[RMDB]
RNA sequence: GGGAACGACUCGAGUAGAGUCGAAAAGAAAUAAAAGCGGUAGAGAGAGCUCUGUCCGGAAAAUAAUAAGACAGAGUGGCCCGGUUUAUGAUUUAAAACCGGAUUGCUAAGACGGCGAAUUAGAAAAGGGAUAUAGUAUCUUCGGAUACUAUAUCCCAAAAGAAACAACAACAACAAC
Reactivity to 2A3 in 0.01 (KOAc 150mM, MgCl2 10mM, bicine 150mM(pH8.5), 24C), signal-to-noise 1, nucleotides 027 to 126: g010a000a030a000u180a050a170a000a000g030c050g000g000u080a060g010a020g000a000g000a020g030c000u000c000u000g000u000c000c040g000g040a060a080a000a000u160a030a090u070a050a040g000a000c000a000g000a000g000u000g010g030c000c000c000g000g000u000u040u000a170u130g180a170u020u230u230a070a070a000a000c020c000g000g000a050u000u160g000c000u010a050a050g000a000c000g040g000c060g020a000a110u140u080a200g030a200a100a010a000
Reactivity to DMS in 0.01 (KOAc 150mM, MgCl2 10mM, bicine 150mM(pH8.5), 24C), signal-to-noise 2, nucleotides 027 to 126: g030a030a080a160u000a060a140a120a150g000c030g010g010u000a070g030a130g010a160g000a300g050c030u000c010u000g040u020c010c090g010g010a070a070a040a130u060a110a070u050a180a090g000a010c010a000g000a010g020u000g030g010c110c000c000g010g010u000u000u030a000u030g050a150u090u080u040a050a020a030a020c000c020g010g000a040u000u040g030c000u000a030a070g020a090c030g010g000c080g000a030a020u010u010a110g000a060a010a110a150